Chemical mapping of a 177-nucleotide RNA with 2A3. Values cover nucleotides 27 to 126. Reactivities are rounded to 0.1 and cut off at 0 and 3. The reactions ran in a buffer of 150 mM KOAc, 10 mM MgCl2 and 150 mM bicine (pH 8.5), at 24 C.
RNA sequence: GGGAACGACUCGAGUAGAGUCGAAAAAUGGAAAAGUCAGGCUUUGAUAAGUGUGAAUAUGUAACUGAUGCGCAAGCCAUAUUCAAGGCAUUGAACAUGAAAGCAGCUGUAGGAGCCCUUUACCAAGCCCGUCCCAGGAGUUCGCUCCUGGGACGGGAAAAGAAACAACAACAACAAC
Reactivity to 2A3 in 0.01 (KOAc 150mM, MgCl2 10mM, bicine 150mM(pH8.5), 24C), signal-to-noise 1, nucleotides 027 to 126: a000u090g000g000a000a000a000a060g050u080c070a050g000g030c000u000u010u000g130a140u200a080a000g000u000g030u000g120a130a090u100a070u040g000u170a000a140c000u050g000a070u120g010c120g030c000a000a000g000c000c020a080u110a030u070u120c090a070a040g040g130c140a040u020u220g040a090a000c030a060u080g000a020a000a000g050c110a000g190c000u050g030u080a000g040g040a000g000c010c000c000u010u010u020a070c000c000a000a000g070